[RMDB]
RNA sequence: GGGAACGACUCGAGUAGAGUCGAAAAGACUGCGUGCACUAGAGACGAUAUCGAGCCGGAAAUUAAUCGAUAAUGUCUCGAGUAGUGGAUACGAUCCGGCAAGUAUCGACUACAUGUGCUCGUAGGAACCUAUAAUGAUGUUCGCAUCAUUAUAGGUAAAAGAAACAACAACAACAAC
Reactivity to 2A3 in 0.01 (KOAc 150mM, MgCl2 10mM, bicine 150mM(pH8.5), 24C), signal-to-noise 9, nucleotides 027 to 126: g080a010c000u000g000c000g000u020g000c000a000c000u010a000g000a000g000a010c020g030a030u010a000u060c010g000a010g000c000c010g020g120a080a140a120u300u260a110a220u120c000g000a000u010a040a090u130g010u000c000u000c000g000a000g000u020a000g000u010g120g000a000u000a010c000g010a030u020c000c000g000g000c020a030a010g000u000a000u010c040g080a000c000u010a010c000a020u020g000u000g000c000u000c000g000u000a000g000g010a000
Reactivity to DMS in 0.01 (KOAc 150mM, MgCl2 10mM, bicine 150mM(pH8.5), 24C), signal-to-noise 6, nucleotides 027 to 126: g010a180c000u000g010c000g010u010g000c000a010c010u000a210g000a010g010a020c010g000a100u000a010u000c010g020a050g010c000c000g010g000a070a130a130u030u040a080a110u010c010g010a010u000a000a070u030g000u000c000u000c000g000a200g020u000a010g010u000g000g000a010u000a010c000g000a090u000c000c000g000g000c010a090a150g000u000a000u000c000g000a020c000u000a000c000a150u030g000u000g000c000u000c000g020u000a010g000g000a080
The data come from the RNA Mapping Database (RMDB), library OK1LIB. Chemical mapping of a 177-nucleotide RNA with 2A3 and DMS. Conditions: 150 mM KOAc, 10 mM MgCl2 and 150 mM bicine (pH 8.5), 24 C. Reactivities are given for positions 27 through 126. For 2A3 the reverse transcriptase was SuperScript II with manganese.